[RMDB]
RNA sequence: GGGAACGACUCGAGUAGAGUCGAAAAACGCGCUGGUGGACGGCACCGGCCGGCCAGGGAGGGCUACCCGGCGGUCAUUUGGCUGCUACUGGGCGGAAACCUGGUGGUGCGUGCCGCCGGAUUCGCCGGUCCAAAAUUAGUUCGCUAAUUUUGGACCAAAAGAAACAACAACAACAAC
Reactivity to DMS in 0.01 (KOAc 150mM, MgCl2 10mM, bicine 150mM(pH8.5), 24C), signal-to-noise 2, nucleotides 027 to 126: a090c130g010c080g020c000u030g000g050u000g020g020a120c040g060g000c040a110c120c040g020g020c010c050g000g000c000c020a110g000g000g020a110g020g000g000c060u020a100c100c010c020g000g010c000g030g000u010c060a130u010u050u040g000g050c080u000g000c020u000a000c020u030g000g000g000c060g030g030a080a130a240c010c000u000g000g020u000g010g030u000g020c070g010u000g000c000c000g010c020c000g000g000a030u010u010c160g030c050c040
Reactivity to 2A3 in 0.01 (KOAc 150mM, MgCl2 10mM, bicine 150mM(pH8.5), 24C), signal-to-noise 6, nucleotides 027 to 126: a010c030g020c010g010c020u030g010g040u050g150g100a170c050g030g020c040a060c060c020g090g020c010c000g020g000c010c000a030g020g020g050a130g000g090g010c020u060a060c000c000c000g010g000c000g010g000u120c060a080u070u130u300g120g000c060u080g010c010u050a040c040u050g030g000g000c100g110g070a090a040a020c000c000u020g000g000u000g010g020u050g050c020g010u030g020c000c000g000c000c000g000g000a030u080u060c020g000c030c030

An RNA of 177 nucleotides, treated with DMS and 2A3 and read out base by base. Values cover nucleotides 27 to 126. Conditions: 150 mM KOAc, 10 mM MgCl2 and 150 mM bicine (pH 8.5), 24 C. For DMS, 3,467 sequencing reads were counted.